[RMDB]
RNA sequence: GGGAACGACUCGAGUAGAGUCGAAAACGCCGGGUCUGAAAGAACGAUUUUCGGCUGGAGAUGACAGCGCGGUUUUUGAGGACGUCUUUUGUCCGUGCGGUACCGCCCUCCUUGGUCGGCUCCGCCUCUAUGGGAAUCGUUUCGACGAUUCCCAUAGAAAAGAAACAACAACAACAAC
Reactivity to 2A3 in 0.01 (KOAc 150mM, MgCl2 10mM, bicine 150mM(pH8.5), 24C), signal-to-noise 5, nucleotides 027 to 126: c070g000c000c000g020g000g020u000c020u070g110a060a080a040g050a140a070c040g050a060u030u050u100u170c000g010g000c050u040g030g010a090g020a080u110g020a020c020a050g010c030g000c050g080g050u020u040u070u150u170g120a100g020g010a010c030g040u100c110u010u120u090u130g010u000c010c010g020u070g040c030g010g020u020a030c000c010g020c010c000c000u110c040c070u080u230g040g000u020c010g020g000c020u020c000c010g020c010c010u040
Reactivity to DMS in 0.01 (KOAc 150mM, MgCl2 10mM, bicine 150mM(pH8.5), 24C), signal-to-noise 2, nucleotides 027 to 126: c150g010c000c000g010g020g020u010c020u030g000a110a070a080g010a070a120c120g000a160u010u000u020u000c030g000g000c040u000g030g000a060g010a110u040g000a150c030a070g010c130g040c060g000g000u000u000u000u010u000g010a100g010g000a040c040g000u070c140u030u000u030u060g000u020c020c020g000u030g010c050g000g000u000a060c010c010g010c070c030c010u020c210c160u020u020g000g050u030c020g000g000c040u000c030c010g030c060c010u020

This 177-nucleotide RNA was probed chemically with 2A3 and DMS. Conditions: 150 mM KOAc, 10 mM MgCl2 and 150 mM bicine (pH 8.5), 24 C. It was measured as part of the RMDB libraries RFM100 and RFMREP.